[RMDB]
RNA sequence: GGGAACGACUCGAGUAGAGUCGAAAAAUACACCAGCAGUAGGACUCAGCGACCGUCACAACAAGGUUGUGCUGGUAUCCGACGGUCGUAUAGCCCUGUCUUGCAGGUUGCCUUGCACUGACGUGCCACACCAUUUACAGAUUCGUCUGUAAAUGAAGAAUAAGAACAUCUUCGGAUGUUCUUAUUCAAAAGAAACAACAACAACAAC
Reactivity to 2A3 in 0.01 (KOAc 150mM, MgCl2 10mM, bicine 150mM(pH8.5), 24C), signal-to-noise 9, nucleotides 027 to 156: a000u130a020c070a010c010c000a010g000c000a010g020u150a010g010g010a030c010u020c050a010g000c000g000a000c010c000g010u020c010a050c050a200a180c070a240a130g050g010u030u020g020u040g040c020u030g020g020u020a050u020c020c040g000a000c000g000g000u000c000g000u020a040u050a030g020c000c010c000u020g050u050c050u030u100g010c030a030g010g030u090u130g060c040c010u050u070g020c010a040c080u120g070a050c080g030u050g040c040c010a100c010a020c040c020a000u010u000u000a000c000a000g010a020u020u120c150g090u010c080u000g000u000a000a000a000u000g000a020a030
Reactivity to DMS in 0.01 (KOAc 150mM, MgCl2 10mM, bicine 150mM(pH8.5), 24C), signal-to-noise 5, nucleotides 027 to 156: a110u010a070c060a160c020c010a100g020c020a070g020u000a020g040g020a050c020u010c080a160g020c000g000a000c010c000g020u000c030a250c080a120a100c110a070a100g010g020u000u000g030u000g010c020u000g000g010u000a060u000c090c030g010a060c030g010g030u000c040g030u000a090u000a040g000c000c000c000u000g010u000c030u000u000g020c020a100g010g010u000u010g020c000c120u000u010g010c020a060c040u010g030a130c180g010u000g020c030c070a100c060a120c100c000a020u000u000u000a010c000a010g010a060u000u010c300g020u000c010u000g020u000a000a000a010u000g000a070a110
Description:
Chemical mapping of a 207-nucleotide RNA with 2A3 and DMS. For DMS, 14,641 sequencing reads were counted. For 2A3, 12,737 sequencing reads were counted. The RNA was probed in 150 mM KOAc, 10 mM MgCl2 and 150 mM bicine (pH 8.5) at 24 C. It was measured as part of the RMDB library M2RFPK.